Structure probing data (2A3 and DMS) for a 177-nucleotide construct.
For 2A3 the reverse transcriptase was SuperScript II with manganese.
The 2A3 profile rests on 706 reads.
The RNA was probed in 150 mM KOAc, 10 mM MgCl2 and 150 mM bicine (pH 8.5) at 24 C.
RNA sequence: GGGAACGACUCGAGUAGAGUCGAAAAGAGAGUCCACGGAAAGUGCCGCAGAAAAGAUACCGCCGACCCCGUCCUCGGACGGGAGGUAAGGGUGAAAUGGUGCGGUAAGAGCGCACCGCGCUGGUGGAAAACUCAGCCUGUUCGCAGGCUGAGUUUUAAAAGAAACAACAACAACAAC
Reactivity to 2A3 in 0.01 (KOAc 150mM, MgCl2 10mM, bicine 150mM(pH8.5), 24C), signal-to-noise 1, nucleotides 027 to 126: g080a020g000a030g100u030c000c000a020c000g070g150a130a060a030g160u070g020c020c010g090c030a010g070a010a000a000a030g150a030u060a020c000c000g000c000c010g030a040c020c000c000c000g040u010c000c010u020c110g080g020a000c020g000g000g000a000g010g000u040a030a130g010g000g000u030g030a050a070a050u060g000g000u030g000c000g000g000u020a010a000g040a020g030c000g000c000a090c050c010g010c000g000c020u030g010g040u040g000g000
Reactivity to DMS in 0.01 (KOAc 150mM, MgCl2 10mM, bicine 150mM(pH8.5), 24C), signal-to-noise 2, nucleotides 027 to 126: g000a120g030a110g000u000c020c000a010c030g000g030a080a100a110g020u000g000c010c000g030c050a030g010a090a070a080a060g010a050u000a020c000c030g000c000c000g000a160c170c000c000c020g020u000c000c010u020c300g080g000a000c020g030g000g030a000g000g000u010a040a050g000g000g000u000g000a050a080a060u000g000g010u010g020c000g010g000u010a040a030g000a150g000c000g000c020a060c090c070g010c060g000c030u000g010g020u000g000g010